[RMDB]
RNA sequence: GGGAACGACUCGAGUAGAGUCGAAAAAAUUGGAGCGUAAUCGCGUCUUGACGUGAGUGAGCCUAGACUGUAGGCUAUCCCAAGUGGGAUAGCAUAGCUCACAAUACGCUGAUCUACACUCAUACAACCAUCUGGACAUAUUCGUAUGUCCAGAUGGAAAAGAAACAACAACAACAAC
Reactivity to 2A3 in 0.01 (KOAc 150mM, MgCl2 10mM, bicine 150mM(pH8.5), 24C), signal-to-noise 4, nucleotides 027 to 126: a000a080u210u210g100g000a010g000c000g000u000a030a000u010c000g000c000g030u010c070u070u120g120a070c080g040u030g020a030g000u010g020a000g020c000c010u050a100g070a290c080u080g140u200a040g050g030c000u010a000u000c000c000c000a120a110g290u300g040g000g000a010u000a000g000c000a010u040a020g000c000u000c000a010c000a000a020u040a000c000g000c040u070g020a020u000c030u070a020c030a020c020u040c000a050u100a100c040a040a100
Reactivity to DMS in 0.01 (KOAc 150mM, MgCl2 10mM, bicine 150mM(pH8.5), 24C), signal-to-noise 4, nucleotides 027 to 126: a070a090u020u000g000g000a010g020c000g020u000a050a300u000c010g020c010g010u000c100u020u010g000a070c090g010u000g000a060g020u000g000a030g010c040c040u000a060g010a140c120u000g020u000a060g000g000c010u010a000u000c000c000c000a300a150g010u010g020g000g010a020u000a020g010c010a070u000a050g010c010u000c000a020c010a110a120u000a000c010g010c000u010g010a040u010c060u000a010c020a040c040u000c020a100u010a210c200a060a160